[RMDB]
RNA sequence: GGGAACGACUCGAGUAGAGUCGAAAAGCUUUGUACUUGGAUUAUGUAGCAUUCAAGUGCUCUGACUUGAAACAGCGUGAGCUUUUGGGUGUGCAUGAUGUUUGGCACAAACAGCUCUUGCUUAACAACACGAUCGGUUGUUCGCAACCGAUCGUGUAAAAGAAACAACAACAACAAC
Reactivity to DMS in 0.01 (KOAc 150mM, MgCl2 10mM, bicine 150mM(pH8.5), 24C), signal-to-noise 1, nucleotides 027 to 126: g010c000u000u000u000g060u000a000c030u020u030g000g000a010u000u020a130u030g010u000a070g040c150a030u000u020c000a010a010g000u010g000c000u020c010u000g000a240c040u000u000g020a150a110a170c260a000g000c030g070u010g000a010g010c000u000u000u030u010g010g020g090u000g020u000g010c010a090u010g000a080u000g010u000u010u010g030g000c030a030c040a000a030a010c060a090g040c000u000c010u000u000g000c000u010u010a040a110c140a100
Reactivity to 2A3 in 0.01 (KOAc 150mM, MgCl2 10mM, bicine 150mM(pH8.5), 24C), signal-to-noise 2, nucleotides 027 to 126: g010c020u030u040u030g040u020a000c030u030u070g000g020a010u040u050a100u300g240u160a080g110c040a010u010u000c000a010a010g020u030g010c000u060c020u040g230a280c010u040u040g120a120a110a000c050a030g000c000g030u020g000a000g000c000u120u090u180u150g200g010g100u030g010u000g050c030a040u180g080a130u140g270u060u200u300g110g010c000a000c000a030a020a000c010a000g000c000u000c000u000u100g000c000u050u050a090a020c010a020